[RMDB]
RNA sequence: GGGAACGACUCGAGUAGAGUCGAAAAGUAGCCGUUGCUGCUUAAGCGAGUUUCUAGUGCCACUUUGUCACUAGUUUGUAUUAUGAGUUUCACACUCACUUCAAUGACGGUGAUAGAUACUACAUAUCACUCCUGCUUAGAGGGUCAUCUAAGCUAAGACAAUCGUGUACUUCGGUACACGAUUGUCAAAAGAAACAACAACAACAAC
Reactivity to 2A3 in 0.01 (KOAc 150mM, MgCl2 10mM, bicine 150mM(pH8.5), 24C), signal-to-noise 2, nucleotides 027 to 156: g030u000a010g000c040c050g080u120u240g070c020u000g000c090u080u130a080a060g110c070g060a030g020u050u080u000c020u010a010g000u010g080c060c010a160c200u230u190u180g030u100c000a000c000u030a000g030u050u070u080g170u060a090u050u120a100u110g060a020g060u090u150u280c060a050c000a000c000u050c020a030c030u130u130c090a080a300u110g060a050c050g040g000u000g000a010u010a050g090a000u070a140c000u060a030c030a040u100a020u050c010a040c060u020c000c020u070g010c000u020u000a020g000a000g000g060g030u010c070a000u000c000u000a010a010g010c000u000a180a000
Chemical mapping of a 207-nucleotide RNA with 2A3.
Source: RMDB library ARCHII, as collected in RNAgym.
The reactions ran in a buffer of 150 mM KOAc, 10 mM MgCl2 and 150 mM bicine (pH 8.5), at 24 C.
For 2A3 the reverse transcriptase was SuperScript II with manganese.